Description
The data come from the RNA Mapping Database (RMDB), library M2PK50. An RNA of 177 nucleotides, treated with 2A3 and DMS and read out base by base. The RNA was probed in 150 mM KOAc, 10 mM MgCl2 and 150 mM bicine (pH 8.5) at 24 C. For DMS the reverse transcriptase was MarathonRT. The DMS profile rests on 1,586 reads. 2A3 adducts were read by reverse transcription with SuperScript II with manganese.
RNA sequence: GGGAACGACUCGAGUAGAGUCGAAAACCACAUAUCUUCGGAUAUGUGGAAAUAAGGGAAACGGAUAAUUCCGGUCGACUCCGGAGAAACAAAGUCAAAUAAAAAGCAUCUUCUUCGGAAGAUGCAACACAGUCCUAAAGUUCGCUUUAGGACUGUGAAAAGAAACAACAACAACAAC
Reactivity to 2A3 in 0.01 (KOAc 150mM, MgCl2 10mM, bicine 150mM(pH8.5), 24C), signal-to-noise 3, nucleotides 027 to 126: c000c000a000c000a000u010a010u020c010u020u050c160g070g000a000u000a010u010g000u030g000g030a070a110a040u160a030a030g060g020g030a090a060a030c070g010g030a040u050a220a140u300u000c000c000g010g010u010c010g000a000c090u090c300c000g000g000a030g110a010a010a000c010a000a010a020g030u040c060a040a040a000u130a050a110a010a010a000g010c000a000u000c000u000u000c000u000u040c060g010g000a000a000g000a000u000g000c000a000a000
Reactivity to DMS in 0.01 (KOAc 150mM, MgCl2 10mM, bicine 150mM(pH8.5), 24C), signal-to-noise 2, nucleotides 027 to 126: c000c000a040c000a010u000a000u000c000u010u010c170g050g000a010u000a000u000g010u000g010g010a020a070a020u020a060a050g000g000g010a050a030a070c100g010g000a130u000a100a100u000u000c000c000g000g010u000c000g000a050c000u010c000c020g000g000a030g040a080a010a230c180a000a030a040g000u010c020a130a060a060u000a020a050a050a120a120g000c010a000u000c000u000u000c000u010u010c150g020g000a020a000g000a010u000g020c000a020a090